[RMDB]
RNA sequence: GGGAACGACUCGAGUAGAGUCGAAAAGUUAGGUGAGGCUCCUAUGCAAACACAGGCCACUGCCCAAAAAUGUCCAAAAACGCCAAUGGGUAGAACAGGGAUUGUCGGAUUAAGGCUUUCCAUAAUGAAAACAAAGUAUGCUUCGGCAUACUUUGAAUCCAAGAUUCUAGUUCGCUAGAAUCUUGGAAAAAGAAACAACAACAACAAC
Reactivity to DMS in 0.01 (KOAc 150mM, MgCl2 10mM, bicine 150mM(pH8.5), 24C), signal-to-noise 2, nucleotides 027 to 156: g010u010u020a080g030g060u000g020a140g030g010c030u000c030c000u000a100u010g010c040a130a070a110c060a100c030a090g060g020c020c010a060c040u000g020c000c010c000a000a030a110a100a100u020g000u000c030c040a070a060a110a150a080c040g030c030c020a030a230u020g010g000g020u000a020g010a070a110c070a090g010g030g020a070u000u010g020u010c060g000g000a110u000u000a050a170g000g000c010u000u000u000c020c020a040u010a040a090u020g000a080a080a070a200c010a020a010a030g000u000a010u000g000c010u000u000c300g080g000c000a000u000a000c010u000u000u000g010a050a160
Reactivity to 2A3 in 0.01 (KOAc 150mM, MgCl2 10mM, bicine 150mM(pH8.5), 24C), signal-to-noise 2, nucleotides 027 to 156: g010u040u030a060g030g010u040g040a080g000g040c020u070c020c020u100a090u130g050c050a040a080a040c050a020c040a070g020g020c000c020a020c010u020g030c060c030c010a020a060a000a010a000u030g020u020c030c020a040a020a100a010a000c010g000c030c010a020a030u030g020g000g000u020a020g020a040a050c100a110g020g000g060a030u020u030g040u060c010g070g000a060u160u100a110a050g010g000c000u020u020u010c040c000a050u170a220a090u200g100a050a070a010a000c000a000a000a000g000u000a000u000g000c000u000u110c190g050g000c000a000u000a000c000u000u000u000g000a020a000